[RMDB]
RNA sequence: GGGAACGACUCGAGUAGAGUCGAAAAUUUCUCUGAUUAUGUGUCUCGAAACAUGGCAGAAAGUGAGGGGGAACGGUCCUUGCGACACUGGUUGCUACUAUAUGAGCUUCUAGUUACUAUAUACCCGGUUAUUUAACGAGUUCGCUCGUUAAAUAACAAAAGAAACAACAACAACAAC
Reactivity to DMS in 0.01 (KOAc 150mM, MgCl2 10mM, bicine 150mM(pH8.5), 24C), signal-to-noise 3, nucleotides 027 to 126: u010u010u000c040u000c010u000g020a110u010u000a030u000g000u010g010u000c050u010c090g010a100a120a080c090a080u010g000g020c020a040g010a070a060a110g020u010g000a170g010g020g010g000g030a070a070c140g030g010u010c010c020u010u000g020c060g020a050c090a060c030u000g010g010u000u000g000c020u010a060c090u000a120u000a110u010g010a060g010c020u000u000c040u000a040g010u000u000a090c110u000a090u010a090u000a090c020c040c010g010
Reactivity to 2A3 in 0.01 (KOAc 150mM, MgCl2 10mM, bicine 150mM(pH8.5), 24C), signal-to-noise 2, nucleotides 027 to 126: u010u090u000c020u000c010u020g100a200u050u180a120u090g090u010g020u010c030u020c230g040a070a090a080c030a040u030g070g000c020a010g100a080a090a040g110u090g030a080g000g060g010g000g030a020a000c020g030g000u030c000c000u050u080g030c040g050a020c020a010c050u010g000g010u020u010g040c010u030a170c030u040a070u020a070u300g040a020g020c000u000u000c000u000a000g000u060u060a030c030u040a050u030a010u040a110c020c000c020g000
An RNA of 177 nucleotides, treated with DMS and 2A3 and read out base by base. For 2A3 the reverse transcriptase was SuperScript II with manganese. The 2A3 profile rests on 1,403 reads.